[RMDB]
RNA sequence: GGGAACGACUCGAGUAGAGUCGAAAAUAAACCAGUCACUAAGAAAUACACUUACUCCUUCUUGCCUAAAGAAGACGGCGAUGUGUUGUUGGCUGAGUUUGACACUUAUGACCCUAUUUAUAAGAAUUAAGGUAUCAGUUCGCUGAUACCAAAAGAAACAACAACAACAAC
Reactivity to DMS in 0.01 (KOAc 150mM, MgCl2 10mM, bicine 150mM(pH8.5), 24C), signal-to-noise 9, nucleotides 027 to 129: u000a010a010a010c020c000a010g020u020c000a050c160u010a110a090g030a150a110a040u070a040c010a010c010u010u050a130c020u030c040c010u000u000c010u000u030g060c170c180u090a080a030a050g000a040a000g000a060c290g000g040c080g010a030u050g020u020g030u020u020g010u060u010g020g040c000u020g000a040g030u000u000u000g020a090c150a110c050u010u020a050u000g000a040c050c000c010u000a090u030u030u010a070u000a060a080g020a090a050u030u060a060a120
Reactivity to 2A3 in 0.01 (KOAc 150mM, MgCl2 10mM, bicine 150mM(pH8.5), 24C), signal-to-noise 9, nucleotides 027 to 129: u110a000a000a000c000c000a010g010u010c010a000c070u150a160a050g090a140a210a020u260a020c010a010c010u080u250a110c010u040c010c000u010u020c000u010u050g210c070c090u250a110a070a030g080a030a010g040a030c060g020g000c050g020a050u060g010u000g000u050u030g050u070u040g020g000c010u010g010a040g080u010u010u020g050a020c040a010c060u080u090a060u250g040a090c010c000c010u020a130u040u230u030a190u050a060a070g110a090a080u180u110a150a040
Chemical mapping of a 170-nucleotide RNA with DMS and 2A3.
For 2A3 the reverse transcriptase was SuperScript II with manganese.
The reactions ran in a buffer of 150 mM KOAc, 10 mM MgCl2 and 150 mM bicine (pH 8.5), at 24 C.